[RMDB]
The data come from the RNA Mapping Database (RMDB), library OK2TRN. An RNA of 177 nucleotides, treated with DMS and 2A3 and read out base by base. For 2A3 the reverse transcriptase was SuperScript II with manganese. The RNA was probed in 150 mM KOAc, 10 mM MgCl2 and 150 mM bicine (pH 8.5) at 24 C.
RNA sequence: GGGAACGACUCGAGUAGAGUCGAAAACAAUCGAUGGCCGCCGCAUUCCAUAACAUCAAAGUUGGCUCCUUUGGCUCUAAGGAUGGCUGCUCUUUACGGAGAGUACCACAACUCGCCUGCUAUACAGGGAUAGAUAGCACUUCGGUGCUAUCUAUCCAAAAGAAACAACAACAACAAC
Reactivity to DMS in 0.01 (KOAc 150mM, MgCl2 10mM, bicine 150mM(pH8.5), 24C), signal-to-noise 2, nucleotides 027 to 126: c070a100a090u020c050g010a050u020g020g020c000c050g000c040c000g010c080a080u000u010c030c010a060u000a050a070c100a040u000c140a030a080a110g010u010u010g010g020c020u000c060c000u000u000u020g000g000c050u000c070u020a100a070g000g000a090u000g000g040c170u000g010c020u000c010u000u000u000a080c190g000g000a000g000a020g010u020a040c020c030a020c130a070a050c080u000c070g020c050c050u000g030c090u000a110u010a120c260a090g000
Reactivity to 2A3 in 0.01 (KOAc 150mM, MgCl2 10mM, bicine 150mM(pH8.5), 24C), signal-to-noise 1, nucleotides 027 to 126: c000a000a170u170c040g020a000u050g000g040c000c000g010c050c000g000c080a080u130u010c040c010a030u060a170a060c010a050u130c040a000a100a100g040u110u000g010g020c010u050c000c000u110u030u080g050g000c030u000c010u090a050a050g120g000a100u090g020g020c100u040g010c000u000c020u000u070u040a070c120g000g050a010g010a000g050u010a050c010c010a090c000a130a050c000u020c040g020c010c000u000g000c020u120a070u040a180c070a040g000